Structure probing data (2A3 and DMS) for a 177-nucleotide construct. Reactivities are given for positions 27 through 126. 2A3 adducts were read by reverse transcription with SuperScript II with manganese. Conditions: 150 mM KOAc, 10 mM MgCl2 and 150 mM bicine (pH 8.5), 24 C. It was measured as part of the RMDB library RFMREP.
RNA sequence: GGGAACGACUCGAGUAGAGUCGAAAAAGGGAUGACCAACUGUCCUGGUUUGCCUGGGACUGAGGGGUUACUGAGGACACGUGAAGUCCCUGGGCAAACUGGAGUGGUUGGUUCAUUCUAGCUUUUACUCAUAUACAGGGUUCGCCCUGUAUAUGAGAAAAGAAACAACAACAACAAC
Reactivity to 2A3 in 0.01 (KOAc 150mM, MgCl2 10mM, bicine 150mM(pH8.5), 24C), signal-to-noise 4, nucleotides 027 to 126: a000g020g000g010a010u000g000a010c000c000a000a000c010u030g040u060c000c010u020g020g000u010u010u010g000c000c010u010g000g000g000a010c010u010g020a060g070g210g010g020u040u060a120c130u210g130a110g170g070a040c060a010c210g210u110g090a010a000g010u000c020c000c030u060g020g010g000c000a000a000a000c000u000g000g010a050g030u060g000g010u000u020g000g000u030u010c000a000u010u010c000u000a010g000c010u000u060u020u050a200
Reactivity to DMS in 0.01 (KOAc 150mM, MgCl2 10mM, bicine 150mM(pH8.5), 24C), signal-to-noise 2, nucleotides 027 to 126: a120g010g010g000a020u000g000a050c010c000a000a030c000u000g000u000c020c000u000g010g010u010u000u000g020c010c010u000g020g000g010a010c000u000g000a300g000g000g010g000u000u000a210c200u010g000a160g000g000a050c020a030c020g010u010g000a260a030g010u000c000c000c010u010g020g000g010c010a000a000a000c010u000g010g010a030g010u000g000g010u000u000g010g000u010u000c000a010u000u000c010u000a110g020c060u000u000u000u000a140